[RMDB]
RNA sequence: GGGAACGACUCGAGUAGAGUCGAAAACGGGAUUGGUCCAAAGAAGUUAUCAGCAUGGGUAGUACCAAGACAAGGAAUCGGCUUAUCGGCUUGAGCAAACGAUGUCGCUAAAGUAGAGUGGGUGUGCCCUCUCUUCGUCAUUCGUGACGAAGAGAGGAAAAGAAACAACAACAACAAC
Reactivity to 2A3 in 0.01 (KOAc 150mM, MgCl2 10mM, bicine 150mM(pH8.5), 24C), signal-to-noise 2, nucleotides 027 to 126: c010g000g010g050a040u050u070g080g010u030c040c030a070a020a080g100a070a000g040u110u120a100u190c040a020g080c030a050u040g050g000g000u040a020g030u020a060c010c020a050a030g060a070c030a030a100g030g020a070a030u060c020g030g000c030u040u100a040u050c000g030g000c010u040u100g030a020g000c000a000a000a030c050g010a030u070g030u080c030g000c080u070a100a000a060g040u030a050g080a010g090u060g000g020g000u050g030u070g000c010
Reactivity to DMS in 0.01 (KOAc 150mM, MgCl2 10mM, bicine 150mM(pH8.5), 24C), signal-to-noise 3, nucleotides 027 to 126: c120g000g010g000a120u010u000g010g010u000c050c080a050a080a090g010a110a120g000u010u000a070u000c050a100g030c070a080u000g000g010g020u000a070g010u000a110c050c040a080a080g000a050c080a050a070g000g010a090a060u000c060g020g010c040u000u020a050u000c100g020g000c040u000u000g000a080g020c070a100a080a100c070g000a050u010g000u000c070g000c060u000a070a060a080g020u000a030g000a080g010u000g020g000g010u010g030u000g000c090

This 177-nucleotide RNA was probed chemically with 2A3 and DMS.
For DMS the reverse transcriptase was MarathonRT.